[RMDB]
RNA sequence: GGGAACGACUCGAGUAGAGUCGAAAAUUGAGCCGACAUCAAGAACUUCAUGUGGCUGAUGAAUUCUCACAGCAGAUAUUUAAAGCAUACCACGGGGAAGUGGAAGUGCCGUGGAUGACCUCUGGAGCUUGUCGAGGGAAUUCGUUCCCUCGACAAGAAAAGAAACAACAACAACAAC
Reactivity to 2A3 in 0.01 (KOAc 150mM, MgCl2 10mM, bicine 150mM(pH8.5), 24C), signal-to-noise 2, nucleotides 027 to 126: u070u030g050a020g010c050c010g120a040c000a030u070c140a060a110g000a200a150c070u120u030c030a070u090g010u070g070g000c030u000g000a060u040g000a020a170u090u070c010u020c010a130c060a030g010c030a010g050a050u110a200u120u180u120a120a150a010g000c010a040u100a200c000c000a000c000g000g000g000g070a000a290g000u150g110g050a190a020g060u090g050c020c010g010u020g000g010a000u000g060a080c010c100u010c020u000g060g010a010g100
Reactivity to DMS in 0.01 (KOAc 150mM, MgCl2 10mM, bicine 150mM(pH8.5), 24C), signal-to-noise 1, nucleotides 027 to 126: u010u000g020a090g050c090c050g010a040c050a050u020c110a020a090g010a090a050c070u000u020c060a040u000g000u010g020g010c000u020g010a020u010g010a090a200u000u010c040u010c050a050c220a100g010c090a060g010a090u010a020u000u000u020a100a090a120g000c040a020u010a060c010c000a030c000g010g020g000g000a090a140g050u020g000g000a130a050g020u010g010c010c020g020u000g000g010a050u000g000a070c120c030u000c020u010g000g040a150g000